[RMDB]
RNA sequence: GGGAACGACUCGAGUAGAGUCGAAAACAGGCGGUGUACGCACCGCCUGAACGGAUGGCAUACGUGCCAUCCGAAUGAUGCCCCUCACCCACUGUCGAAGAUCCCCGGUGGGCGAGGGGGUGGCAGGGAUCAAGCACCACUAUACGUAGUGGUGCAACCCCUGAUAAAAUUUCGAUUUUAUCAGGGGAAAAGAAACAACAACAACAAC
Reactivity to DMS in 0.01 (KOAc 150mM, MgCl2 10mM, bicine 150mM(pH8.5), 24C), signal-to-noise 1, nucleotides 027 to 156: c010a030g000g010c000g090g040u010g030u000a160c300g070c010a080c000c000g020c000c000u000g000a040a070c070g040g000a040u000g000g060c020a140u010a060c300g040u000g030c010c000a010u000c000c000g010a000a020u000g020a150u010g010c000c000c010c010u000c000a040c000c010c010a030c020u020g000u020c020g000a150a240g030a180u000c040c020c000c010g010g020u000g000g050g010c010g000a060g000g010g000g000g030u000g000g020c080a070g000g020g000a100u000c020a110a220g000c020a000c010c010a030c000u020a100u010a110c180g030u000a010g020u000g020g000u000g000c000a000a030
Reactivity to 2A3 in 0.01 (KOAc 150mM, MgCl2 10mM, bicine 150mM(pH8.5), 24C), signal-to-noise 3, nucleotides 027 to 156: c000a000g010g010c010g000g030u010g020u060a030c260g020c080a000c000c000g000c010c000u000g000a050a010c000g000g000a000u000g000g040c000a010u020a130c200g070u050g000c000c010a000u000c000c000g000a000a030u140g030a030u260g060c000c000c000c010u030c020a040c000c000c040a000c000u090g060u200c100g050a090a030g050a110u070c020c030c030c020g010g000u010g000g000g000c010g000a010g010g000g000g000g020u080g070g000c130a030g040g000g050a030u100c050a040a010g060c050a010c010c050a000c000u020a040u020a070c160g060u010a000g010u010g000g030u000g000c000a000a000

The data come from the RNA Mapping Database (RMDB), library OK3TST. Chemical mapping of a 207-nucleotide RNA with DMS and 2A3. The reactions ran in a buffer of 150 mM KOAc, 10 mM MgCl2 and 150 mM bicine (pH 8.5), at 24 C. For 2A3 the reverse transcriptase was SuperScript II with manganese. For DMS, 2,706 sequencing reads were counted.